[RMDB]
RNA sequence: GGGAACGACUCGAGUAGAGUCGAAAAUGAGUUGGAAGCUGCGCAGAAAGCCUAUCAGGAAGCUAUGGACUCUGGUGACACCUCACCACAAGUUCUUAAGGCUUUGCAGAAGGCUGUUAAUAUAGCUAGAGCCACGGGUUCGCCCGUGGCAAAAGAAACAACAACAACAAC
Reactivity to DMS in 0.01 (KOAc 150mM, MgCl2 10mM, bicine 150mM(pH8.5), 24C), signal-to-noise 5, nucleotides 027 to 129: u040g000a090g170u020u000g040g000a160a070g010c040u000g050c110g060c080a000g040a150a110a100g040c000c000u010a110u030c020a160g000g130a000a000g050c000u020a120u000g140g000a030c020u000c300u000g000g010u020g000a080c300a100c300c300u010c000a010c000c040a020c300a100a000g020u020u020c020u010u020a060a100g000g030c020u000u000u000g000c120a140g000a140a070g000g040c010u060g030u040u100a000a050u010a000u060a040g010c040u000a040g010a260
Reactivity to 2A3 in 0.01 (KOAc 150mM, MgCl2 10mM, bicine 150mM(pH8.5), 24C), signal-to-noise 2, nucleotides 027 to 129: u180g000a080g040u050u040g000g000a040a050g050c030u090g000c070g000c020a010g160a070a080a000g000c000c000u100a240u090c000a010g030g000a000a000g000c050u090a130u200g000g030a000c020u020c040u070g010g020u000g000a020c030a000c090c080u030c000a000c000c040a060c080a020a000g020u000u000c000u160u080a230a190g000g000c000u060u000u070g030c050a000g000a030a000g000g000c000u020g000u040u000a160a010u300a010u040a080g000c000u010a040g000a040
Chemical mapping of a 170-nucleotide RNA with DMS and 2A3. For DMS, 5,768 sequencing reads were counted. Conditions: 150 mM KOAc, 10 mM MgCl2 and 150 mM bicine (pH 8.5), 24 C.